This 207-nucleotide RNA was probed chemically with 2A3. High 2A3 reactivity points to a flexible backbone, as in loops and unpaired stretches. The RNA was probed in 150 mM KOAc, 10 mM MgCl2 and 150 mM bicine (pH 8.5) at 24 C. 2A3 adducts were read by reverse transcription with SuperScript II with manganese.
RNA sequence: GGGAACGACUCGAGUAGAGUCGAAAACUACAGUACACUAUACCGCUGCACACUUGUUCGGCACGGAAUUUGUUGCUGGCACGUGUCCAUUCACAUUACCAAACAUUAACAAUUACUUAACGUUUGGUUCCAUAUGUUUUUCCACUGUUAACAAUGGUCGGCUAUUCCUAUUCGUAGGAAUAGCCGAAAAAGAAACAACAACAACAAC
Reactivity to 2A3 in 0.01 (KOAc 150mM, MgCl2 10mM, bicine 150mM(pH8.5), 24C), signal-to-noise 1, nucleotides 027 to 156: c040u110a050c000a010g030u040a030c080a010c150u140a050u200a100c060c050g050c150u080g030c140a020c000a050c150u110u130g050u300u270c020g000g050c020a000c000g040g130a070a070u160u120u170g040u060u020g000c010u010g080g000c020a020c080g080u060g010u060c080c000a070u130u150c040a020c060a160u000u110a020c000c000a000a000a000c020a020u010u090a050a010c030a070a170u240u110a230c060u080u000a070a000c010g000u010u010u010g020g000u000u000c010c000a020u160a140u080g010u000u000u000u050u040c040c050a040c080u010g040u060u020a050a000c020a020a000u000g020g000